This 177-nucleotide RNA was probed chemically with DMS. The data come from the RNA Mapping Database (RMDB), library OK2TRN. The reactions ran in a buffer of 150 mM KOAc, 10 mM MgCl2 and 150 mM bicine (pH 8.5), at 24 C.
RNA sequence: GGGAACGACUCGAGUAGAGUCGAAAAGAAGCAGAGGGAGCAGAUGGCUACAACUAUAACCGUAACCAGUUGAUUGAAGAUGUAGAACGUACCUUCGCAGAGGUAAUAGAGGGACUGCAGGACAAUACCUUACACUCGACUUCGGUCGAGUGUAAGGAAAAGAAACAACAACAACAAC
Reactivity to DMS in 0.01 (KOAc 150mM, MgCl2 10mM, bicine 150mM(pH8.5), 24C), signal-to-noise 1, nucleotides 027 to 126: g020a060a030g000c020a070g000a110g010g010g030a150g010c050a030g000a150u010g000g000c040u000a020c030a050a130c090u000a110u000a040a080c010c040g040u000a060a100c120c070a070g010u000u000g010a100u020u010g020a050a130g080a080u010g010u010a060g010a010a070c160g010u010a010c030c010u000u000c050g010c150a150g000a020g010g000u000a040a060u010a050g030a130g030g000g000a040c070u000g000c000a150g000g000a050c120a030a100u000a110